RNA sequence: GGGAACGACUCGAGUAGAGUCGAAAAUUGGCGAAUGCCUGUGGAACUACAUUUGUUGCGGGUUCGAGACCCGUCAGAGCCCGGCUCUGUAGCUCAAUGGUAGAGCGGUGUAUUCACAUAAACUUGUAAAAGACACGUGCCUUCGGGCACGUGUCAACUAAAUACUAGAGUUCGCUCUAGUAUUUAGAAAAGAAACAACAACAACAAC
Reactivity to 2A3 in 0.01 (KOAc 150mM, MgCl2 10mM, bicine 150mM(pH8.5), 24C), signal-to-noise 3, nucleotides 027 to 156: u050u030g020g000c030g150a240a080u240g020c000c020u010g000u030g030g040a040a040c070u020a000c040a040u040u050u160g050u030u030g010c000g000g000g020u000u000c010g000a010g010a030c020c020c000g020u000c010a010g000a000g000c200c300c100g110g010c010u020c000u010g030u010a000g000c010u010c010a050a020u180g240g000u150a030g000a000g020c010g000g000u010g010u000a040u020u050c030a010c000a060u070a060a150a060c070u110u070g040u150a060a090a060a030g010a000c000a000c000g000u000g000c020c000u020u130c190g030g000g000c050a000c000g000u000g000u000c000a000a000
Reactivity to DMS in 0.01 (KOAc 150mM, MgCl2 10mM, bicine 150mM(pH8.5), 24C), signal-to-noise 2, nucleotides 027 to 156: u010u020g000g010c010g020a110a070u000g020c010c020u000g040u000g020g000a090a080c030u000a010c010a020u000u010u000g020u000u010g000c000g010g020g020u000u000c060g020a300g000a110c000c010c030g020u000c050a090g010a090g010c010c120c100g040g020c010u000c010u000g000u010a050g020c000u000c020a070a070u000g020g040u000a050g030a120g070c000g020g040u000g010u000a060u010u000c030a070c040a100u010a070a090a130c060u000u000g000u000a050a070a110a200g000a080c000a070c000g010u000g000c000c000u000u000c300g020g020g020c000a000c000g020u000g000u000c000a020a050